[RMDB]
RNA sequence: GGGAACGACUCGAGUAGAGUCGAAAAGAGGAUUCAACGAGCUUCGUAGCAACGAUAGCAACGUAGCUUUUGCUACGACCCAAGCUAUCGAGGGUAGCUACGUCCCUUGCUCGAGGGAAGAAUCCGAAGGGAUAUCGGUAUUCGUACCGAUAUCCCUAAAAGAAACAACAACAACAAC
Reactivity to 2A3 in 0.01 (KOAc 150mM, MgCl2 10mM, bicine 150mM(pH8.5), 24C), signal-to-noise 2, nucleotides 027 to 126: g100a040g020g000a000u020u010c050a090a000c040g000a020g000c010u090u050c030g000u020a010g020c010a050a040c000g010a010u000a010g000c010a030a030c030g010u020a000g000c010u160u150u200u300g000c010u010a000c020g070a090c000c030c030a040a030g000c000u010a000u030c020g010a060g070g180g070u130a060g000c000u000a010c010g050u050c000c000c030u010u040g000c000u000c000g020a050g030g090g000a100a100g010a010a020u000c010c000g000a010
Reactivity to DMS in 0.01 (KOAc 150mM, MgCl2 10mM, bicine 150mM(pH8.5), 24C), signal-to-noise 3, nucleotides 027 to 126: g000a240g000g000a040u000u010c000a110a130c060g010a010g020c010u010u000c020g030u000a000g030c000a170a100c060g010a010u010a000g020c000a120a120c010g000u000a000g000c000u010u000u010u010g030c000u000a000c010g010a090c140c120c190a120a150g000c000u000a000u010c000g000a070g010g020g030u000a170g010c000u000a010c030g000u000c060c080c100u010u000g000c020u000c010g000a090g010g010g010a100a110g000a020a010u000c010c010g010a080
This 177-nucleotide RNA was probed chemically with 2A3 and DMS. The reactions ran in a buffer of 150 mM KOAc, 10 mM MgCl2 and 150 mM bicine (pH 8.5), at 24 C. DMS adducts were read by reverse transcription with MarathonRT. Source: RMDB library OK2TRN, as collected in RNAgym. 2A3 adducts were read by reverse transcription with SuperScript II with manganese.